The record gives the reactivity of an RNA of 177 nucleotides to DMS. Source: RMDB library TTRDEL, as collected in RNAgym.
RNA sequence: GGGAACGACUCGAGUAGAGUCGAAAAGAUAUGGACGCAUCGGGAGAUCGAAUGGUCGGAAACGACCACUAGAUCGAAGAACGAGUGCGUCCUAAGUCAAAGUAAAUAGCCUUCGGGCUAUUUACAACAGCCUUAGGGAGUUCGCUCCCUAAGGCUGAAAAGAAACAACAACAACAAC
Reactivity to DMS in 0.01 (KOAc 150mM, MgCl2 10mM, bicine 150mM(pH8.5), 24C), signal-to-noise 1, nucleotides 027 to 126: g010a060u000a300u000g010g000a030c000g040c000a060u010c050g010g010g000a040g030a000u000c010g070a250a130u000g000g040u010c000g030g000a050a070a190c000g000a020c010c000a010c040u000a220g000a020u000c010g000a080a090g000a110a120c000g000a000g010u000g010c000g000u010c000c010u000a000a070g020u000c020a080a080a170g010u000a010a000a000u010a000g010c000c000u000u030c300g000g010g000c000u000a000u000u000u000a020c000a140a080
Conditions: 150 mM KOAc, 10 mM MgCl2 and 150 mM bicine (pH 8.5), 24 C.